RNA sequence: GGGAACGACUCGAGUAGAGUCGAAAAUGUCUAGGGGUGAAAGGCCCAUCGAAUCCGGAAACAGCUGGUUCCGACCGAAACAUGUCGAAGCAUGACCUCUGCCGAGGUAGUCUGUGGGGUAGAGCGACUAUUUCACUUAGUUCGCUAAGUGAAAUAGAAAAGAAACAACAACAACAAC
Reactivity to DMS in 0.01 (KOAc 150mM, MgCl2 10mM, bicine 150mM(pH8.5), 24C), signal-to-noise 6, nucleotides 027 to 126: u010g010u000c040u000a160g020g010g010g020u000g010a080a100a130g010g020c040c020c030a100u000c050g010a090a100u010c080c030g020g010a090a090a070c110a100g010c090u000g010g010u010u010c030c020g000a040c060c030g000a100a090a110c100a070u000g000u000c050g010a070a090g020c060a050u010g010a080c050c010u000c020u010g020c160c080g000a060g000g010u000a040g010u000c030u010g010u000g010g010g000g000u000a050g000a090g020c090g000a150
Reactivity to 2A3 in 0.01 (KOAc 150mM, MgCl2 10mM, bicine 150mM(pH8.5), 24C), signal-to-noise 3, nucleotides 027 to 126: u130g010u010c020u030a100g010g000g010g000u060g090a200a010a020g080g010c010c010c030a020u030c000g030a030a040u010c020c020g000g080a060a090a040c030a020g070c050u080g050g000u040u000c010c020g020a010c020c010g010a070a040a030c050a030u120g040u050c060g020a060a010g020c020a020u090g020a040c000c020u050c030u070g090c040c100g000a010g000g020u030a040g070u020c040u040g060u070g030g030g000g020u050a030g010a010g060c020g010a010